[RMDB]
This 177-nucleotide RNA was probed chemically with DMS and 2A3. The reactions ran in a buffer of 150 mM KOAc, 10 mM MgCl2 and 150 mM bicine (pH 8.5), at 24 C. Values cover nucleotides 27 to 126.
RNA sequence: GGGAACGACUCGAGUAGAGUCGAAAAGGCGACCAGCGCGGCCGAACCGGUGACGUACACCUUGACACCGGGUGGCGGCGCAAGGCGCUCGACGAUGGUCUUGACCGCUUCCACGGACUCGUUGGCCUGUCCUAACGAAGUUCGCUUCGUUAGGACAAAAAGAAACAACAACAACAAC
Reactivity to DMS in 0.01 (KOAc 150mM, MgCl2 10mM, bicine 150mM(pH8.5), 24C), signal-to-noise 4, nucleotides 027 to 126: g000g020c010g020a050c030c020a300g010c010g040c030g010g040c010c010g010a090a300c010c000g020g000u000g010a100c110g000u020a130c210a080c250c150u010u000g010a180c040a020c010c010g010g000g020u010g000g020c010g000g020c000g020c000a030a030g000g000c030g000c030u000c030g010a170c060g000a070u010g010g010u010c010u000u010g000a110c090c020g030c060u000u010c080c040a190c070g000g000a030c040u010c030g000u000u000g000g000c020c050
Reactivity to 2A3 in 0.01 (KOAc 150mM, MgCl2 10mM, bicine 150mM(pH8.5), 24C), signal-to-noise 3, nucleotides 027 to 126: g020g010c010g010a120c020c000a000g020c020g000c020g190g000c000c000g000a090a030c010c000g000g020u020g010a030c050g040u200a060c100a180c110c070u080u190g070a030c010a010c000c000g000g000g000u010g020g000c010g050g010c010g000c010a000a040g000g000c010g000c020u020c020g000a020c010g040a060u120g030g070u020c010u070u160g050a060c000c040g030c100u130u030c050c060a050c060g000g000a020c020u000c050g050u040u050g060g010c030c030